[RMDB]
RNA sequence: GGGAACGACUCGAGUAGAGUCGAAAAGCGCCUUCGGGCGCAUCAACUCCUAAGUCUAUAGCGACGAUCAUGCCAAGCUUCGAAGAACAAUCGGAAACGAUUGGGAGAAGCUCGGCAUGGGAGCUAUAGAUAUGGAUUACAUUGGCUUCGGCCAAAAUACAAGCUACUAAUUCGUUAGUAGCUUGUAAAAAGAAACAACAACAACAAC
Reactivity to DMS in 0.01 (KOAc 150mM, MgCl2 10mM, bicine 150mM(pH8.5), 24C), signal-to-noise 1, nucleotides 027 to 156: g060c010g000c050c050u000u010c300g070g020g030c000g020c010a020u000c050a040a220c130u010c000c020u000a080a230g020u020c030u010a020u000a000g000c000g020a120c090g000a080u000c000a010u000g020c000c000a030a000g000c000u000u000c010g000a140a240g050a230a240c000a020a000u000c000g050g030a260a150a300c000g000a030u000u000g000g000g040a300g010a020a000g000c000u000c010g020g000c000a010u000g000g010g010a050g000c000u000a000u010a040g020a010u010a080u000g000g020a100u000u000a110c050a110u000u000g000g000c000u000u010c270g030g080c030c050a020a020a060a290
Reactivity to 2A3 in 0.01 (KOAc 150mM, MgCl2 10mM, bicine 150mM(pH8.5), 24C), signal-to-noise 2, nucleotides 027 to 156: g000c000g020c000c010u050u060c230g100g010g000c010g020c000a020u070c020a000a100c030u040c010c000u050a140a060g020u020c000u000a010u000a010g000c000g230a260c000g010a080u010c010a000u010g010c000c010a040a010g000c010u020u010c010g260a300a050g010a040a010c000a000a000u000c010g020g040a030a000a080c010g010a000u000u000g000g000g010a050g000a000a000g000c010u000c000g000g000c000a000u000g000g000g000a010g000c000u000a000u010a010g000a000u010a000u020g010g000a010u040u170a110c100a190u080u100g010g010c010u050u050c230g050g000c000c000a050a020a000a000